[RMDB]
Structure probing data (2A3 and DMS) for a 170-nucleotide construct. The DMS profile rests on 80,894 reads.
RNA sequence: GGGAACGACUCGAGUAGAGUCGAAAAGAUGUCGAUCCCCUCUCCCGUUCGGGAAAAGGGGGACUCCGGAACUCCCUGCAGGCUGGGGACGAAGCCCCCACCGGGCGCUCCCCUCGGCGGGCCGUCCAACGUAACGUGUUCGCACGUUACAAAAGAAACAACAACAACAAC
Reactivity to 2A3 in 0.01 (KOAc 150mM, MgCl2 10mM, bicine 150mM(pH8.5), 24C), signal-to-noise 9, nucleotides 027 to 129: g070a040u220g030u090c040g040a170u080c010c000c000c000u010c000u010c000c020c000g170u300u300c220g010g000g000a030a050a020a030g010g010g000g010g000a020c010u020c030c010g030g020a040a040c020u040c010c010c010u020g030c030a080g080g020c050u060g010g000g000g030a010c060g070a100a030g000c000c000c000c010c000a060c030c040g000g000g000c050g010c020u040c000c000c000c000u030c010g040g000c010g000g010g000c010c000g020u010c010c010a050a020c100
Reactivity to DMS in 0.01 (KOAc 150mM, MgCl2 10mM, bicine 150mM(pH8.5), 24C), signal-to-noise 9, nucleotides 027 to 129: g020a050u040g010u010c040g000a120u000c000c010c000c040u020c160u000c000c000c000g060u110u070c160g000g000g000a030a040a080a000g000g000g000g000g000a020c000u000c050c040g000g050a050a080c110u000c070c000c010u020g020c040a030g030g020c120u050g000g000g000g000a030c120g030a100a150g000c000c010c010c040c090a110c140c120g020g010g030c040g000c090u050c010c010c010c000u030c000g010g010c010g000g000g040c230c000g020u040c010c000a100a110c190

DMS (dimethyl sulfate) methylates the pairing face of unpaired adenines and cytosines. DMS adducts were read by reverse transcription with MarathonRT.